[RMDB]
Structure probing data (DMS and 2A3) for a 207-nucleotide construct. Values cover nucleotides 27 to 156. The reactions ran in a buffer of 150 mM KOAc, 10 mM MgCl2 and 150 mM bicine (pH 8.5), at 24 C. For 2A3 the reverse transcriptase was SuperScript II with manganese. The data come from the RNA Mapping Database (RMDB), library M2RFPK. For DMS the reverse transcriptase was MarathonRT.
RNA sequence: GGGAACGACUCGAGUAGAGUCGAAAAUCGCGUUGGCUGCCUAAUUCAAGGAAUUAGCGUGCCUUGAUGCUAAGGGUUUGAUAUCUGCUAAAACCCGGUGCAUUCAUCAAUGCAGGUUAAGCCAAAGAAACGGCUCACGAAUUCGUUCGUGAGCCAACAAGACUCGAAAGUUCGCUUUCGAGUCUUGAAAAGAAACAACAACAACAAC
Reactivity to DMS in 0.01 (KOAc 150mM, MgCl2 10mM, bicine 150mM(pH8.5), 24C), signal-to-noise 3, nucleotides 027 to 156: u010c060g010c090g020u000u010g020g010c070u000g020c040c040u000a090a130u010u000c030a110a220g010g010a090a110u000u000a040g010c060g030u010g040c010c030u000u000g030a030u020g000c060u000a300a220g000g000g020u000u010u010g010a140u000a050u000c050u010g000c070u010a150a020a020a040c010c000c000g030g040u000g020c060a050u000u010c020a060u000c050a060a100u000g010c030a050g020g020u000u010a030a080g000c000c030a020a080a190g000a070a100a150c120g010g010c000u000c020a000c000g010a030a050u000u010c300g000u000u000c010g030u000g010a020g030c000c000a000a010
Reactivity to 2A3 in 0.01 (KOAc 150mM, MgCl2 10mM, bicine 150mM(pH8.5), 24C), signal-to-noise 2, nucleotides 027 to 156: u080c030g010c030g090u020u010g010g030c020u060g030c010c000u080a140a110u110u050c000a040a040g100g030a020a050u070u020a090g070c050g050u050g000c000c000u000u000g000a020u000g000c010u060a030a100g020g010g000u030u000u000g060a080u040a120u210c090u170g050c040u080a030a000a000a000c000c000c000g010g000u020g000c000a020u060u230c030a050u080c030a040a040u090g030c010a000g050g010u060u180a090a000g010c000c000a010a020a040g080a020a100a000c100g000g000c000u000c000a000c000g000a000a020u100u030c180g020u090u000c000g000u050g050a000g000c000c000a000a000